[RMDB]
RNA sequence: GGGAACGACUCGAGUAGAGUCGAAAAUACUAGCAUUCGGUUCCAACCCUGGAUGGAUACUCAAAGGUUCGCUGAGUUCCUUCCUCCGGCCUUGGUUCCGAUGCUCCAUCCAAGGCCGGAAACCAAACUUGAUCGUGGUAUUCGUACCACGAUCAAGAAAAGAAACAACAACAACAAC
Reactivity to DMS in 0.01 (KOAc 150mM, MgCl2 10mM, bicine 150mM(pH8.5), 24C), signal-to-noise 1, nucleotides 027 to 126: u010a090c090u000a020g000c010a090u010u000c070g010g000u010u000c090c040a060a220c070c040c020u010g000g010a060u010g010g010a060u020a010c030u000c040a000a060a100g020g000u000u010c140g010c130u000g000a020g000u000u000c000c010u000u020c080c010u000c010c010g000g010c010c020u010u010g010g010u000u000c060c010g000a020u000g050c070u000c030c010a050u030c010c010a020a020g070g010c000c000g000g000a010a060a040c170c130a070a050a100
Reactivity to 2A3 in 0.01 (KOAc 150mM, MgCl2 10mM, bicine 150mM(pH8.5), 24C), signal-to-noise 1, nucleotides 027 to 126: u170a020c040u060a010g010c010a030u000u120c050g010g030u070u060c050c030a030a050c090c050c040u020g000g000a020u030g040g000a030u040a170c000u000c010a110a180a080g170g100u170u170c080g030c130u050g010a010g000u000u010c000c040u030u020c010c020u000c020c000g010g020c000c000u010u020g020g000u170u000c040c010g040a040u040g000c000u000c010c030a010u010c000c000a010a000g050g000c000c000g000g020a020a000a000c020c020a040a020a030
Source information
This 177-nucleotide RNA was probed chemically with DMS and 2A3. It was measured as part of the RMDB library M2PK90. Values cover nucleotides 27 to 126. For 2A3, 1,539 sequencing reads were counted. Values are in units of 0.01, from 0 to 300, in steps of 10. The reactions ran in a buffer of 150 mM KOAc, 10 mM MgCl2 and 150 mM bicine (pH 8.5), at 24 C.